[RMDB]
RNA sequence: GGGAACGACUCGAGUAGAGUCGAAAAGAUAUGGAGCCAUAUAAGCUCGAUAAGCUGGAUUCGGAAACGAAUUUCAGCUUUUGACGAGCGAAAUGGCUCCUAAGUCAAAACGCGUCUUCGGACGCGACUAUUAUCCAGCCUUCGGGCUGGAUAAUAGAAAAGAAACAACAACAACAAC
Reactivity to DMS in 0.01 (KOAc 150mM, MgCl2 10mM, bicine 150mM(pH8.5), 24C), signal-to-noise 3, nucleotides 027 to 126: g030a020u000a300u010g030g030a020g010c000c000a020u010a040u010a080a300g010c010u000c020g040a210u000a020a030g000c000u010g030g000a010u020u010c010g000g000a100a070a110c010g000a020a010u000u000u000c000a010g020c000u000u000u010u000g010a140c150g010a010g000c010g000a100a090a010u000g000g000c000u000c000c000u000a000a090g000u000c040a070a060a090a130c040g030c000g020u010c000u000u010c280g010g000a000c000g020c010g010a040
Reactivity to 2A3 in 0.01 (KOAc 150mM, MgCl2 10mM, bicine 150mM(pH8.5), 24C), signal-to-noise 1, nucleotides 027 to 126: g000a010u040a030u140g010g000a000g030c000c000a020u100a020u020a090a030g000c000u010c040g000a050u030a130a010g000c010u000g000g000a000u000u040c030g040g060a030a060a040c010g040a000a000u050u200u270c010a000g000c000u000u010u000u020g030a040c010g000a000g000c000g000a020a100a000u000g000g030c000u010c000c000u000a010a010g020u010c030a000a020a060a030c030g000c000g020u010c020u040u070c280g170g010a000c000g010c020g010a020
Chemical mapping of a 177-nucleotide RNA with DMS and 2A3. The RNA was probed in 150 mM KOAc, 10 mM MgCl2 and 150 mM bicine (pH 8.5) at 24 C. 2A3 adducts were read by reverse transcription with SuperScript II with manganese. Source: RMDB library TTRDES, as collected in RNAgym.